[RMDB]
RNA sequence: GGGAACGACUCGAGUAGAGUCGAAAAACAACAUCAGUGCCAAUAACCAUAACAAUAGCGCCCAUGGCUACUGAGUUUAAUGGGCUGCGAACCGCCAUCGCCCAAGGAUUACCAACAAAACCCGGGCGACUCUUACACGUUUCGACGUGUAAGAGUCAAAAGAAACAACAACAACAAC
Reactivity to DMS in 0.01 (KOAc 150mM, MgCl2 10mM, bicine 150mM(pH8.5), 24C), signal-to-noise 1, nucleotides 027 to 126: a030c090a060a060c050a080u000c020a090g000u030g000c020c050a090a080u000a110a200c120c090a060u000a080a140c200a090a050u020a100g000c020g010c000c020c020a060u000g000g030c000u000a050c090u000g000a070g010u000u020u000a130a040u010g000g000g000c060u030g000c020g000a050a120c060c040g090c110c090a050u000c020g000c000c000c030a060a130g020g020a060u000u000a120c070c030a050a110c100a030a080a070a010c020c010c090g020g000g010c040
Reactivity to 2A3 in 0.01 (KOAc 150mM, MgCl2 10mM, bicine 150mM(pH8.5), 24C), signal-to-noise 1, nucleotides 027 to 126: a000c010a030a000c000a020u000c010a020g010u020g020c000c000a030a030u090a070a060c070c070a100u110a250a030c050a110a300u090a180g000c000g000c030c000c000a020u010g000g000c000u020a030c050u050g030a010g010u090u060u050a080a080u040g000g000g040c050u050g010c040g000a040a000c020c010g050c000c040a060u070c030g020c010c020c030a010a000g010g020a050u090u080a080c100c050a060a050c040a040a300a030a000c020c000c030g010g050g020c050
The record gives the reactivity of an RNA of 177 nucleotides to DMS and 2A3. Conditions: 150 mM KOAc, 10 mM MgCl2 and 150 mM bicine (pH 8.5), 24 C. DMS adducts were read by reverse transcription with MarathonRT. For 2A3, 879 sequencing reads were counted. For DMS, 664 sequencing reads were counted.